[RMDB]
RNA sequence: GGGAACGACUCGAGUAGAGUCGAAAAGCUGCGUGAAACCUCGCUGUUUUCUUGGCUAACUUUCAGCGUGGUGAGGCAAGGCGGCAAAAAAAAGUUGGGAGCAGCAACGGCAAGCAAAAAAAAAGUUACAAGUUGCGAUGGUUCGCCAUCGCAACAACGUGUCCAUUAGGUUCGCCUAAUGGACACGAAAAGAAACAACAACAACAAC
Reactivity to 2A3 in 0.01 (KOAc 150mM, MgCl2 10mM, bicine 150mM(pH8.5), 24C), signal-to-noise 2, nucleotides 027 to 156: g000c000u030g000c010g090u130g020a090a020a010c020c010u000c030g010c000u000g010u000u000u000u020c050u120u100g150g020c070u000a040a000c010u020u020u020c010a010g000c010g000u000g000g000u000g010a090g030g070c050a020a040g070g030c030g010g010c050a080a000a050a050a050a030a000a000g060u110u050g000g010g040a070g030c000a000g020c030a060a030c030g070g010c020a010a040g010c030a040a060a020a000a000a000a000a000a000g010u020u010a030c030a050a130g010u000u000g000c000g000a000u000g000g060u010u040c190g040c040c000a000u010c000g000c010a000a000c000a000a010